An RNA of 207 nucleotides, treated with 2A3 and DMS and read out base by base. Conditions: 150 mM KOAc, 10 mM MgCl2 and 150 mM bicine (pH 8.5), 24 C. It was measured as part of the RMDB library OK3TST. For 2A3, 1,896 sequencing reads were counted. 2A3 adducts were read by reverse transcription with SuperScript II with manganese.
[RMDB]
RNA sequence: GGGAACGACUCGAGUAGAGUCGAAAACGGAUCCGACGUGUGCCUCCAAGACCGCGAGUACCUGCUGGACCUGGCCCGGAAGCAGCAAGCCGCGCUAGACGCGUUGAGUGACUGGGCUGGGCGUAACCGGACGGGCUUCUACGACGAAGCGCAGGACCUCAUCCAAACGAUUCGUCGUUUGGAUGAGAAAAGAAACAACAACAACAAC
Reactivity to 2A3 in 0.01 (KOAc 150mM, MgCl2 10mM, bicine 150mM(pH8.5), 24C), signal-to-noise 3, nucleotides 027 to 156: c040g000g050a110u070c030c010g020a080c030g130u110g030u050g050c010c030u050c000c030a100a000g040a060c040c050g050c000g060a010g040u100a170c010c000u020g000c010u060g000g070a150c000c000u000g000g000c020c000c000g010g010a040a020g030c080a000g020c010a020a060g140c130c000g020c010g000c050u150a070g060a150c020g030c000g020u050u080g020a010g010u020g000a030c000u030g000g030g000c010u010g000g000g000c000g040u040a020a060c030c030g030g060a040c030g010g030g000c000u040u020c020u050a140c090g170a020c130g010a040a000g010c010g000c010a030g000g020a030c000
Reactivity to DMS in 0.01 (KOAc 150mM, MgCl2 10mM, bicine 150mM(pH8.5), 24C), signal-to-noise 1, nucleotides 027 to 156: c090g020g020a070u000c020c010g050a080c060g020u010g000u000g000c020c020u000c080c030a090a140g030a100c060c010g000c050g000a180g000u000a070c020c020u040g020c050u010g000g020a100c010c030u000g000g000c000c000c000g000g060a100a300g000c000a040g050c070a100a220g000c030c000g040c040g050c080u070a150g000a200c030g020c000g020u000u010g010a300g010u010g000a300c000u030g030g040g000c060u000g000g010g020c030g030u010a200a100c000c030g000g000a150c060g010g000g050c020u000u000c020u000a060c010g000a200c020g010a050a170g010c040g040c030a100g000g000a260c170